[RMDB]
RNA sequence: GGGAACGACUCGAGUAGAGUCGAAAACACCAGGGUUGAAAACCUGGGGGAUGACCUGUGGUUAGGGGUGAAAGGCCAAUCAAACUCCGUGAUAGCUGGUUCUCCCCGAAAUGCAUUUAGGUGCAGCACGGAACAGACAGUUCGCUGUCUGUUCCGUAAAAGAAACAACAACAACAAC
Reactivity to DMS in 0.01 (KOAc 150mM, MgCl2 10mM, bicine 150mM(pH8.5), 24C), signal-to-noise 2, nucleotides 027 to 126: c030a130c100c000a010g030g000g010u000u010g000a170a090a130a180c020c000u010g000g020g000g000g000a030u020g000a070c020c010u010g020u000g020g020u020u000a200g000g010g010g010u000g010a030a120a280g000g010c110c120a100a060u000c030a110a140a090c120u010c140c110g000u000g000a040u000a230g010c030u000g000g020u000u000c120u000c010c000c000c000g020a060a070a080u000g010c000a020u010u000u040a090g000g000u000g000c030a000g000c140